[RMDB]
RNA sequence: GGGAACGACUCGAGUAGAGUCGAAAAGAGCACACACAAACCCGGACUUGACGUUAGCGAACUCCUCGGCGACGACGGCACGGUUGACCAUAGCGUUAUCAAGAGCCUCACGAACGCCGACGCGGGCGGUGGCACGCGCAUCACAACCGAGACGUGCAGUAGGAGAUAAGUUCGCUUAUCUCCUACUAAAAGAAACAACAACAACAAC
Reactivity to DMS in 0.01 (KOAc 150mM, MgCl2 10mM, bicine 150mM(pH8.5), 24C), signal-to-noise 3, nucleotides 027 to 156: g000a140g050c030a050c060a090c030a130c060a040a100a140c030c020c030g020g000a110c070u000u000g020a040c040g020u000u010a080g020c000g020a050a070c030u000c040c010u010c040g010g000c000g030a130c040g010a080c050g000g010c020a080c010g000g020u010u000g010a130c040c020a140u000a120g020c050g020u000u010a110u000c090a050a160g010a170g030c010c020u050c040a100c020g000a070a070c030g010c000c040g020a050c100g000c030g000g000g040c020g050g000u000g020g020c030a060c020g010c020g040c060a080u010c060a070c030a030a070c010c030g000a150g000a060c030g000u030g000c060
Reactivity to 2A3 in 0.01 (KOAc 150mM, MgCl2 10mM, bicine 150mM(pH8.5), 24C), signal-to-noise 5, nucleotides 027 to 156: g070a010g020c040a030c010a000c010a000c060a110a040a080c020c020c010g050g040a070c060u050u100g030a020c040g070u030u100a040g040c030g020a060a040c010u020c020c010u070c040g040g000c020g020a050c020g030a040c020g030g000c060a010c060g040g000u030u050g040a090c010c020a060u120a090g050c060g060u030u030a060u150c050a110a040g010a030g100c010c000u040c000a160c050g070a180a010c010g010c020c050g050a070c070g010c020g010g030g000c010g050g030u030g020g000c020a010c040g010c020g010c010a040u100c030a030c010a050a040c010c030g020a030g040a060c050g020u030g020c030